Source: RMDB library OK2TRN, as collected in RNAgym. An RNA of 177 nucleotides, treated with DMS and 2A3 and read out base by base. The DMS profile rests on 1,108 reads.
RNA sequence: GGGAACGACUCGAGUAGAGUCGAAAAUGGCCGGGGGUGGGGGCCUGCUGUGGGUCAGUGUGCCACCCUCUGCAGGGCAGCCUGUGGGAGAAGGGACAGCGGGUAAAAAGAGAAGGCAAGCUGGCAGGAGUAUAUGAACAUUCGUGUUCAUAUACUCAAAAGAAACAACAACAACAAC
Reactivity to DMS in 0.01 (KOAc 150mM, MgCl2 10mM, bicine 150mM(pH8.5), 24C), signal-to-noise 1, nucleotides 027 to 126: u000g000g040c030c060g020g000g020g030g050u000g010g040g110g030g020c000c000u000g010c040u000g020u000g000g000g010u000c030a060g030u010g000u010g000c010c030a180c010c020c010u010c030u000g000c010a060g010g000g030c120a090g000c010c030u000g040u000g010g030g000a070g020a120a090g020g000g020a130c110a080g030c080g000g000g000u020a010a080a040a110a120g000a110g000a070a050g010g000c070a040a080g000c020u000g000g030c090a070g030
Reactivity to 2A3 in 0.01 (KOAc 150mM, MgCl2 10mM, bicine 150mM(pH8.5), 24C), signal-to-noise 1, nucleotides 027 to 126: u040g030g030c110c000g000g020g000g030g020u080g030g000g080g080g030c000c020u010g040c040u040g030u190g040g030g090u080c010a030g120u110g030u040g210c020c000a020c000c000c000u010c000u000g010c010a020g000g010g000c010a010g070c000c000u020g020u050g040g050g020a240g080a140a060g030g000g010a010c050a040g020c030g030g000g000u060a080a070a000a010a020g050a010g020a090a020g010g000c030a020a050g020c020u020g050g000c030a040g140